Structure probing data (2A3) for a 207-nucleotide construct.
The RNA was probed in 150 mM KOAc, 10 mM MgCl2 and 150 mM bicine (pH 8.5) at 24 C.
For 2A3 the reverse transcriptase was SuperScript II with manganese.
It was measured as part of the RMDB library RNAMAK.
[RMDB]
RNA sequence: GGGAACGACUCGAGUAGAGUCGAAAAAAAACGCUGGGAGACUAAGUGAGCGAAGAACAUGUGGGUCACAUACUGAAGCGCGCACGGUAUUAAGCCACAUGGGAGCUCAUAUGUCUCCUGUGCUGAAGCGCGCACGGCAACCGAAAGGUGCGAAAAACCGUACACAAAGGUUCGCCUUUGUGUACGGAAAAGAAACAACAACAACAAC
Reactivity to 2A3 in 0.01 (KOAc 150mM, MgCl2 10mM, bicine 150mM(pH8.5), 24C), signal-to-noise 2, nucleotides 027 to 156: a010a010a010a010c000g000c010u040g000g030g010a010g020a010c060u070a300a200g050u020g000a020g020c010g260a300a000g000a000a000c000a010u000g000u000g010g000g110u270c300a020c010a030u010a000c000u030g050a300a060g000c000g000c000g000c000a000c030g020g000u010a000u000u040a010a020g010c010c000a000c000a010u000g010g000g000a010g000c000u020c010a000u020a040u060g000u000c010u010c000c000u000g000u000g000c000u020g030a070a010g020c020g020c010g000c000a000c000g020g020c000a010a010c010c000g050a020a030a020g000g020u030g010c030g130a160a000a010a000a000